[RMDB]
RNA sequence: GGGAACGACUCGAGUAGAGUCGAAAAGAUAUGGAGAGUCGGACCAGGACGAAUUAUAGAACUACCACCGAGUAUCGGAAACGAUAUCCGGUGGCUAUAACUAUCCUGGUCCGACUCUCCUAAGUCAUCUACUUUUAAACUUCGGUUUAAAAGUAGAAAAAGAAACAACAACAACAAC
Reactivity to DMS in 0.01 (KOAc 150mM, MgCl2 10mM, bicine 150mM(pH8.5), 24C), signal-to-noise 2, nucleotides 027 to 126: g000a030u010a300u000g000g000a020g000a030g010u000c000g000g020a020c000c000a000g010g000a040c090g020a070a100u000u000a000u000a000g000a110a050c120u010a300c020c000a010c000c020g020a060g020u000a010u000c000g020g010a120a060a230c000g010a000u000a010u000c030c000g020g020u000g000g000c000u000a000u000a000a000c100u000a300u000c000c000u000g010g000u010c000c000g000a000c000u000c000u000c000c000u000a000a050g010u010c030a130